[RMDB]
RNA sequence: GGGAACGACUCGAGUAGAGUCGAAAACAGUGCUUACACCACCAUGGCAGCAGAUGCCAUUACCAGGUUUCAGAGGCUGAGGGGCAAGCGCGUCAGCUUUGUCACCGGGACGGAUGAACAUGGAGAGCAUCGGGUACCAGUUCGCUGGUACCCGAUGAAAAGAAACAACAACAACAAC
Reactivity to 2A3 in 0.01 (KOAc 150mM, MgCl2 10mM, bicine 150mM(pH8.5), 24C), signal-to-noise 1, nucleotides 027 to 126: c010a000g030u010g090c030u080u130a020c030a020c060c010a020c010c040a040u040g060g000c010a020g010c050a050g100a300u060g000c030c000a010u020u020a090c020c010a060g030g090u020u010u090c060a070g010a010g070g030c030u050g040a100g060g000g000g030c030a080a000g010c040g030c000g260u090c030a030g000c000u230u040u060g070u020c050a080c090c040g000g000g050a020c030g000g060a090u050g040a030a040c050a080u060g060g000a080g020a010g090
Reactivity to DMS in 0.01 (KOAc 150mM, MgCl2 10mM, bicine 150mM(pH8.5), 24C), signal-to-noise 1, nucleotides 027 to 126: c110a090g010u010g000c010u000u010a110c120a100c220c020a030c060c120a070u020g000g000c020a020g000c210a070g000a110u000g010c000c000a060u000u000a070c050c070a020g040g000u000u000u020c050a050g000a140g020g030c030u000g010a180g010g000g000g000c020a030a010g010c050g050c120g000u010c080a010g000c010u050u000u000g010u000c020a100c010c000g000g010g020a070c100g000g000a150u020g000a060a060c050a090u000g000g010a120g010a120g000

The data come from the RNA Mapping Database (RMDB), library OK2TRN.
The record gives the reactivity of an RNA of 177 nucleotides to 2A3 and DMS.
2A3 is a SHAPE reagent: it acylates the 2'-hydroxyl of flexible nucleotides of all four kinds.
The reactions ran in a buffer of 150 mM KOAc, 10 mM MgCl2 and 150 mM bicine (pH 8.5), at 24 C.
For DMS the reverse transcriptase was MarathonRT.
For 2A3 the reverse transcriptase was SuperScript II with manganese.